[RMDB]
RNA sequence: GGGAACGACUCGAGUAGAGUCGAAAAGUCGAGUAGCAAGCUCACGACUCAAGAGUUCAAGGACUUACUCGCAAAGCCGCACGUCUACGCCGUGAACCACGGAUACAACCACUACGACUAUGGGAGCUAUUCGAUUGAUGAGAUAGAGGACGACGUGAAUUCAUCUACUUUUCGAAGUAGAUGAAUUAAAAGAAACAACAACAACAAC
Reactivity to DMS in 0.01 (KOAc 150mM, MgCl2 10mM, bicine 150mM(pH8.5), 24C), signal-to-noise 6, nucleotides 027 to 156: g020u010c020g020a170g030u000a070g030c040a080a110g020c030u000c050a140c070g020a040c030u000c040a110a190g010a080g010u000u010c050a140a210g000g000a080c030u000u000a070c020u010c030g010c050a100a070a090g020c010c020g010c030a080c060g000u000c020u010a130c040g010c040c000g010u010g010a060a100c070c040a100c010g020g010a110u000a050c090a080a180c020c010a060c050u000a070c070g010a090c060u000a070u000g020g000g020a180g010c120u000a050u000u000c020g000a090u010u010g010a140u010g000a120g010a130u000a070g000a140g010g010a090c060g020a050c030g010u000g010
Reactivity to 2A3 in 0.01 (KOAc 150mM, MgCl2 10mM, bicine 150mM(pH8.5), 24C), signal-to-noise 9, nucleotides 027 to 156: g100u090c010g000a000g000u030a010g030c110a160a030g010c030u020c020a070c060g140a070c040u070c140a120a080g030a020g080u090u090c090a100a080g060g010a050c020u050u040a020c010u030c010g030c040a040a070a030g070c010c010g020c010a010c020g020u000c010u080a030c100g000c020c010g030u050g080a070a050c070c010a020c040g010g000a020u030a060c030a050a040c030c020a030c050u170a070c070g130a040c060u090a100u100g030g000g010a050g000c030u030a020u040u030c030g080a100u030u150g050a070u100g030a060g030a060u090a070g110a040g020g020a010c030g010a000c020g020u040g060

Annotation
An RNA of 207 nucleotides, treated with DMS and 2A3 and read out base by base. Reactivities are given for positions 27 through 156. For DMS the reverse transcriptase was MarathonRT. As a SHAPE reagent, 2A3 marks flexible, mostly unpaired nucleotides at the ribose 2'-OH. The data come from the RNA Mapping Database (RMDB), library OK3TST. The 2A3 profile rests on 14,327 reads.